[RMDB]
Structure probing data (2A3 and DMS) for a 177-nucleotide construct. For DMS, 4,259 sequencing reads were counted.
RNA sequence: GGGAACGACUCGAGUAGAGUCGAAAAGAUAUGGACCUCCAUCGAGGCAACAGCAUGGUCGGAAACGACCAUGACAUGCCUCAAUGGAAGGUCCUAAGUCAAACCUGCGAACUUCGGUUCGCAGGAAUCCACAGUAAAGGUUCGCCUUUACUGUGGAAAAAGAAACAACAACAACAAC
Reactivity to 2A3 in 0.01 (KOAc 150mM, MgCl2 10mM, bicine 150mM(pH8.5), 24C), signal-to-noise 3, nucleotides 027 to 126: g040a020u090a080u180g000g000a000c000c010u000c020c000a020u010c040g000a000g010g000c010a080a080c060a230g070c010a010u010g030g000u000c000g010g050a060a100a090c010g010a000c000c000a000u000g030a010c000a030u040g000c000c010u000c020a000a000u000g000g090a020a110g010g000u000c000c000u000a030a000g040u000c040a040a070a150c010c000u000g000c000g000a000a010c000u100u170c300g170g000u020u000c000g000c000a010g000g000a000a050
Reactivity to DMS in 0.01 (KOAc 150mM, MgCl2 10mM, bicine 150mM(pH8.5), 24C), signal-to-noise 2, nucleotides 027 to 126: g000a010u000a300u000g000g000a010c000c000u000c000c010a000u000c040g000a020g010g020c000a020a070c300a230g000c020a010u000g000g000u000c010g000g010a130a120a200c010g000a010c010c000a000u000g000a040c090a160u000g010c000c000u000c010a020a000u000g020g010a040a030g020g020u000c000c000u010a020a100g020u010c030a100a150a290c000c000u000g000c000g000a010a010c010u000u020c300g030g010u000u000c010g010c000a020g010g000a020a040
As a SHAPE reagent, 2A3 marks flexible, mostly unpaired nucleotides at the ribose 2'-OH. DMS adducts were read by reverse transcription with MarathonRT. It was measured as part of the RMDB library TTRDES.